An RNA of 177 nucleotides, treated with 2A3 and DMS and read out base by base.

RNA sequence: GGGAACGACUCGAGUAGAGUCGAAAAAAUGGUUUGAUAACUAGGUGCAGGAUGCUGAUUUGAGCCUCUCCCAAUUCUCUAAUAACCUCACUGGAGGUUAACCAGGCAGGGCUCAAUAUACCUCUUCACUCUUGAAUAGGUUCGCCUAUUCAAGAGUAAAAGAAACAACAACAACAAC
Reactivity to 2A3 in 0.01 (KOAc 150mM, MgCl2 10mM, bicine 150mM(pH8.5), 24C), signal-to-noise 2, nucleotides 027 to 126: a000a000u060g040g010u070u060u070g080a110u100a140a070c050u040a060g060g060u050g030c020a020g020g110a090u100g030c020u070g040a150u070u030u030g000a000g000c000c000u080c020u010c060c010c000a010a090u140u070c070u000c010u070a070a060u050a100a060c000c000u020c040a120c200u180g290g010a010g000g000u010u010a000a000c020c020a020g040g010c030a000g020g010g020c000u000c020a010a000u080a010u040a040c010c020u010c010u050u080c070
Reactivity to DMS in 0.01 (KOAc 150mM, MgCl2 10mM, bicine 150mM(pH8.5), 24C), signal-to-noise 3, nucleotides 027 to 126: a110a060u000g000g010u000u010u000g010a150u010a080a080c060u000a030g030g030u000g010c050a070g010g000a120u000g010c030u010g010a190u000u020u000g010a030g020c020c010u010c140u000c090c010c010a090a160u000u000c080u010c040u000a090a110u000a030a010c000c000u000c020a160c300u000g010g020a020g000g020u000u000a000a060c140c180a050g010g030c280a040g010g000g010c000u010c010a010a020u000a080u010a060c140c050u000c050u010u000c290